[RMDB]
RNA sequence: GGGAACGACUCGAGUAGAGUCGAAAACGCUCCCUCAUCCGUUCCCACGCUGCUGGCAUGGGUGAACCGGUGGAGCGCGAAGUGGUCCGCGCAUUGAUGUUCUUGCGUGCAAAGACCCUGGCUUCCGCUAGCUUUAAAUGUUCGCAUUUAAAGCUAGAAAAGAAACAACAACAACAAC
Reactivity to 2A3 in 0.01 (KOAc 150mM, MgCl2 10mM, bicine 150mM(pH8.5), 24C), signal-to-noise 9, nucleotides 027 to 126: c010g010c010u010c010c010c010u020c020a050u020c000c010g010u020u050c010c040c000a010c030g110c040u270g010c050u130g050g000c000a040u030g030g000g000u080g100a040a050c070c040g070g020u110g020g010a010g000c020g000c020g030a050a010g070u140g140g000u000c010c010g000c000g000c020a040u060u220g090a130u240g240u300u080c050u070u090g020c010g000u010g000c020a090a090a050g000a010c000c000c020u020g060g010c040u030u010c010c000g000
Reactivity to DMS in 0.01 (KOAc 150mM, MgCl2 10mM, bicine 150mM(pH8.5), 24C), signal-to-noise 9, nucleotides 027 to 126: c060g010c010u000c000c020c180u010c050a050u000c070c060g010u000u000c050c000c010a080c100g020c070u000g010c190u000g010g020c220a040u000g000g010g000u000g000a040a060c140c100g010g010u000g000g010a040g020c010g020c040g000a070a060g020u010g020g010u000c010c020g010c300g010c010a030u000u000g030a110u000g010u000u010c150u000u000g010c050g010u000g010c100a050a250a070g000a020c010c000c090u000g010g010c110u000u000c010c040g010